[RMDB]
RNA sequence: GGGAACGACUCGAGUAGAGUCGAAAAGGGGUCAAAGUCAACAGCGCAUGAACUCUCCGAUAAGCAUACUGAAGCCUCCACGGUAUGCUUUUGACGGAGUUGCAUGCGACAUGACUUUGACGGAGGCACCCGCAAUGAGGUUGUUCGCAACCUCAAAUAGACUUGAAUUCUUCGGAAUUCAAGUCUAAAAAGAAACAACAACAACAAC
Reactivity to DMS in 0.01 (KOAc 150mM, MgCl2 10mM, bicine 150mM(pH8.5), 24C), signal-to-noise 1, nucleotides 027 to 156: g000g010g030g010u010c010a000a030a050g040u010c000a030a080c110a200g010c030g000c010a060u010g000a060a040c020u010c000u010c100c030g000a190u020a030a030g000c000a020u000a040c040u000g000a070a130g000c030c000u000c000c000a300c000g020g000u000a000u000g000c000u010u000u010u010g000a260c100g000g000a020g010u000u000g030c000a030u010g010c000g010a060c020a280u010g030a010c010u010u020u000g020a020c040g010g000a040g060g030c020a110c010c000c040g010c110a080a210u010g000a030g030g000u000u010g020u000u000c210g060c070a030a000c000c000u010c010a010a130a300
Reactivity to 2A3 in 0.01 (KOAc 150mM, MgCl2 10mM, bicine 150mM(pH8.5), 24C), signal-to-noise 3, nucleotides 027 to 156: g070g010g020g010u010c000a000a000a000g000u000c010a020a070c090a270g300c030g000c000a000u020g010a040a030c010u000c030u090c170c050g010a080u090a100a000g000c010a000u010a000c010u000g050a090a000g000c000c000u000c010c000a030c010g020g010u010a010u000g000c030u020u010u010u070g130a110c070g050g000a010g000u010u040g120c000a000u000g000c000g060a020c000a000u040g000a010c000u000u010u000g000a000c000g000g000a000g000g000c000a030c010c010c000g030c120a030a080u160g000a000g000g000u010u010g010u050u110c210g010c060a010a000c000c000u000c000a000a000a000